Annotation:
Chemical mapping of a 177-nucleotide RNA with 2A3. The reactions ran in a buffer of 150 mM KOAc, 10 mM MgCl2 and 150 mM bicine (pH 8.5), at 24 C.
[RMDB]
RNA sequence: GGGAACGACUCGAGUAGAGUCGAAAAACGCUUUGCAGAGAUAUAAGGCGCCAUUUUAGGAUUCCAUUUCCUAGUACCAUGACCAAAAUGAACUCCUGCCUCCAUCAUCUCUUCCAAAUUUAUGUUCGAGACAGACUCUCUUCGGAGAGUCUGUCUCAAAAGAAACAACAACAACAAC
Reactivity to 2A3 in 0.01 (KOAc 150mM, MgCl2 10mM, bicine 150mM(pH8.5), 24C), signal-to-noise 1, nucleotides 027 to 126: a000c030g020c100u070u030u070g070c090a030g020a000g070a120u010a040u020a170a010g000g030c000g040c000c000a180u100u050u000u170a070g080g000a100u210u140c040c040a080u100u080u050c010c010u000a030g030u020a080c000c010a030u010g080a120c140c150a000a000a000a300u110g080a030a030c000u010c020c000u060g030c000c000u030c060c010a070u040c030a040u000c010u030c000u110u040c000c010a000a120a070u100u090u040a200u150g040u020u000c010